[RMDB]
RNA sequence: GGGAACGACUCGAGUAGAGUCGAAAAAAAAGAUAUGGAGCCAUAGAGGCCGAGGAUCUAUACCGAGUAUACAUCGGAAACGAUGUAUAUAGUGUAUAGGGAGGCUGGAUGGCUCCUAAGUCAAAAACUGAAUGCUAAUGUUCGCAUUAGCAUUCAGAAAAGAAACAACAACAACAAC
Reactivity to DMS in 0.01 (KOAc 150mM, MgCl2 10mM, bicine 150mM(pH8.5), 24C), signal-to-noise 1, nucleotides 027 to 126: a080a040a070a110g000a030u000a080u000g020g000a010g030c000c000a020u000a160g020a300g000g000c020c000g000a060g010g010a020u000c000u010a020u000a010c000c020g000a300g000u000a000u000a010c000a000u000c010g000g000a000a020a030c010g010a000u010g010u000a000u000a000u000a030g030u000g010u010a000u000a020g010g000g000a010g010g020c000u010g020g020a080u000g010g000c000u000c000c000u000a000a030g000u020c000a100a070a080a110a120
The data come from the RNA Mapping Database (RMDB), library TTRDES. The record gives the reactivity of an RNA of 177 nucleotides to DMS. Conditions: 150 mM KOAc, 10 mM MgCl2 and 150 mM bicine (pH 8.5), 24 C. Values cover nucleotides 27 to 126.